[RMDB]
RNA sequence: GGGAACGACUCGAGUAGAGUCGAAAAGAUAUGGAGCUCGGCCAGGGAGCUCGACAUCGGAAACGAUGUCCAGAGCGACGAUCUGGCGAGCUCCUAAGUCAAAGUGUAAUUCUUCGGAAUUACACAAGUGAUCGUAUUUGUUCGCAAAUACGAUCACAAAAGAAACAACAACAACAAC
Reactivity to DMS in 0.01 (KOAc 150mM, MgCl2 10mM, bicine 150mM(pH8.5), 24C), signal-to-noise 1, nucleotides 027 to 126: g050a060u020a290u010g010g000a020g030c000u000c000g010g070c030c030a030g010g020g000a020g020c000u020c020g020a010c000a000u000c010g020g000a130a100a180c030g010a010u000g000u020c080c300a080g040a010g010c020g000a100c300g000a060u020c010u020g000g000c030g010a010g010c010u000c000c000u020a000a040g010u010c020a110a090a180g010u010g000u010a010a040u000u000c000u000u000c230g000g010a030a000u000u000a000c010a000c010a060a060
Reactivity to 2A3 in 0.01 (KOAc 150mM, MgCl2 10mM, bicine 150mM(pH8.5), 24C), signal-to-noise 1, nucleotides 027 to 126: g090a010u030a020u120g000g000a020g020c010u030c070g300g200c060c000a070g050g060g080a030g020c000u000c000g000a010c000a000u000c000g010g020a010a030a020c010g000a020u010g000u060c060c030a060g020a010g000c000g300a300c090g020a100u000c000u000g000g000c000g000a000g000c000u000c000c000u000a000a000g000u010c030a030a030a200g000u010g010u010a010a010u020u000c010u040u020c300g180g000a040a010u000u000a000c010a010c000a000a010